[RMDB]
RNA sequence: GGGAACGACUCGAGUAGAGUCGAAAAACUAGCGGAUUAUCUAAACAAGCGAUUUAGAGUAACCCCAUAUAAUGUAGACAUGGAAAUCGUUAAUCUUCUUAUUGAGGGACGUCAUACUCUUAUCGACGUAAUGCGUAGUAUUACUUCGUACGAUUCCACAGUGUUCAUCGUUCGCGAUGAACACUGUAAAAGAAACAACAACAACAAC
Reactivity to 2A3 in 0.01 (KOAc 150mM, MgCl2 10mM, bicine 150mM(pH8.5), 24C), signal-to-noise 3, nucleotides 027 to 156: a000c050u060a060g090c010g060g020a010u020u060a010u180c100u220a090a150a110c080a250a010g050c010g040a050u100u060u080a090g000a060g000u100a160a190c010c000c000c020a000u060a010u040a150a090u180g010u020a020g020a020c040a090u050g060g040a040a220a050u150c030g020u040u050a060a020u020c050u040u000c020u030u020a040u010u080g040a240g010g000g000a010c050g050u100c020a020u050a040c010u000c000u040u020a030u000c010g050a030c050g060u050a020a010u040g110c000g060u040a020g010u020a110u040u080a070c060u060u030c010g010u010a020c020g080a080u050u000c010c000
Reactivity to DMS in 0.01 (KOAc 150mM, MgCl2 10mM, bicine 150mM(pH8.5), 24C), signal-to-noise 1, nucleotides 027 to 156: a080c030u000a150g050c070g020g050a040u000u000a030u000c060u000a020a040a180c130a120a160g000c120g020a280u000u040u000a300g010a070g010u000a060a100c010c000c000c000a040u000a040u000a010a080u000g030u000a050g010a030c030a170u010g010g000a090a020a100u020c050g000u000u010a010a140u000c010u000u020c050u000u000a090u000u000g000a070g010g010g000a070c140g020u000c100a150u000a050c070u040c120u000u000a080u000c000g010a040c110g030u000a050a070u000g020c110g040u000a050g020u010a020u000u010a050c040u000u010c060g030u000a100c040g000a120u000u000c000c050